[RMDB]
RNA sequence: GGGAACGACUCGAGUAGAGUCGAAAAUCUUAUAUGUUCGCAUAUAAGAAAAGGCGGAGUAGUGUUGGGUCGCGUAAGGCCAUAAAUUAACAAUCACUCAGAUACAGACCUGGUUCGCCAGGUCUAAUAGUUUGACUAUAUUCGUAUAGUCAAACUAAAAAGAAACAACAACAACAAC
Reactivity to DMS in 0.01 (KOAc 150mM, MgCl2 10mM, bicine 150mM(pH8.5), 24C), signal-to-noise 5, nucleotides 027 to 126: u000c000u000u000a000u000a000u010g000u010u010c200g050c010a010u010a000u000a020a010g000a040a060a090a100g010g010c080g000g010a040g010u000a060g000u000g010u000u000g010g000g020u000c030g010c200g010u010a080a060g000g010c010c020a060u000a040a070a090u000u000a060a080c060a060a060u000c080a050c040u000c070a070g000a120u000a070c190a030g010a020c000c000u000g000g000u000u000c240g020c000c000a010g000g000u000c000u000a010a070
Reactivity to 2A3 in 0.01 (KOAc 150mM, MgCl2 10mM, bicine 150mM(pH8.5), 24C), signal-to-noise 2, nucleotides 027 to 126: u020c000u000u020a000u000a000u010g010u020u040c070g030c070a000u000a000u000a000a030g010a050a120a000a010g090g010c080g030g020a030g030u130a010g020u010g040u080u030g090g020g000u020c050g020c080g130u080a090a050g030g000c010c000a040u110a030a100a020u120u110a060a020c030a040a030u100c010a020c070u060c020a010g020a130u110a150c050a020g000a000c000c000u000g020g020u040u030c080g020c060c000a000g000g000u000c000u000a010a010
Chemical mapping of a 177-nucleotide RNA with DMS and 2A3.
It was measured as part of the RMDB library M2PK50.
For 2A3, 2,433 sequencing reads were counted.
Conditions: 150 mM KOAc, 10 mM MgCl2 and 150 mM bicine (pH 8.5), 24 C.
DMS adducts were read by reverse transcription with MarathonRT.